[RMDB]
RNA sequence: GGGAACGACUCGAGUAGAGUCGAAAAAAUCGUCGACGCAUCGACGACGGUCCUGCCAUGAGACCGUAACGCGGACAUGUCGCCUCGAAUGGCGUCGGGGAGCCGGCAGCUUACCCCAAGGAUGAGCAAAAGAAUGAAACGUUCGCGUUUCAUUCAAGUCAUGUAUUGGGUUCGCCCAAUACAUGACAAAAGAAACAACAACAACAAC
Reactivity to DMS in 0.01 (KOAc 150mM, MgCl2 10mM, bicine 150mM(pH8.5), 24C), signal-to-noise 1, nucleotides 027 to 156: a040a060u000c030g000u000c000g000a150c050g020c060a200u030c000g000a050c010g010a040c000g050g000u000c000c020u010g150c000c260a130u010g000a120g010a020c030c080g000u010a000a030c050g010c020g020g000a080c050a050u010g030u000c050g040c000c010u010c100g040a120a130u000g010g010c020g010u000c030g020g020g030g030a150g010c020c020g000g010c040a140g000c050u000u010a050c010c010c010c000a110a210g020g030a010u000g030a060g000c060a060a030a140a160g010a010a010u000g000a010a000a000c020g060u000u000c290g050c020g010u000u030u010c000a000u000u010c000a030a110
Reactivity to 2A3 in 0.01 (KOAc 150mM, MgCl2 10mM, bicine 150mM(pH8.5), 24C), signal-to-noise 4, nucleotides 027 to 156: a000a020u140c110g090u010c000g060a020c010g000c060a060u030c020g030a030c000g000a000c000g000g020u010c000c020u040g060c000c020a190u190g030a080g040a160c050c070g030u070a100a020c080g020c010g020g010a010c060a150u130g030u040c020g030c040c020u030c030g150a180a100u160g100g010c010g020u000c000g000g000g000g010a020g070c020c030g060g010c040a040g020c010u030u070a120c000c000c000c020a000a040g070g020a060u110g020a020g050c070a020a110a000a110g000a000a000u020g000a000a010a000c000g020u030u080c300g000c000g080u000u020u000c000a000u000u000c000a000a010
Chemical mapping of a 207-nucleotide RNA with DMS and 2A3. Conditions: 150 mM KOAc, 10 mM MgCl2 and 150 mM bicine (pH 8.5), 24 C. Values cover nucleotides 27 to 156. For DMS, 2,009 sequencing reads were counted. Source: RMDB library M2RFPK, as collected in RNAgym. For DMS the reverse transcriptase was MarathonRT.